[RMDB]
RNA sequence: GGGAACGACUCGAGUAGAGUCGAAAAAGCAGCCGGCCACGGGCGCAGACCCACAGGGUGGCGACGUCCGAAGAGACCAGGCCGAAGUUGAAGACCACGUCGUUGACCACUGCCAGCAGCGCCGAGAAUCCAAAAUUACUUUCGAGUAAUUUUGGAUAAAAGAAACAACAACAACAAC
Reactivity to 2A3 in 0.01 (KOAc 150mM, MgCl2 10mM, bicine 150mM(pH8.5), 24C), signal-to-noise 2, nucleotides 027 to 126: a000g040c040a010g000c030c000g000g000c020c000a050c040g000g010g030c020g000c020a030g060a110c010c050c030a120c070a100g090g020g000u030g030g030c030g020a060c010g020u000c020c030g050a140a060g060a060g030a120c040c040a040g000g030c020c000g030a060a020g000u080u140g060a080a030g040a030c030c000a030c060g050u040c010g030u050u020g050a030c020c020a070c060u040g000c010c000a040g000c030a010g000c020g010c030c010g030a040g030a030
Reactivity to DMS in 0.01 (KOAc 150mM, MgCl2 10mM, bicine 150mM(pH8.5), 24C), signal-to-noise 6, nucleotides 027 to 126: a120g010c030a090g030c050c010g010g010c010c020a160c060g000g000g020c030g020c050a150g000a130c030c000c030a170c170a120g010g010g010u000g000g010c010g030a100c050g010u000c020c030g010a090a110g000a160g000a050c050c060a090g020g000c020c010g000a070a090g020u000u000g000a100a110g010a120c040c040a070c080g010u000c040g010u000u000g000a090c030c030a100c050u000g010c030c040a060g000c050a050g010c050g010c030c030g000a110g000a100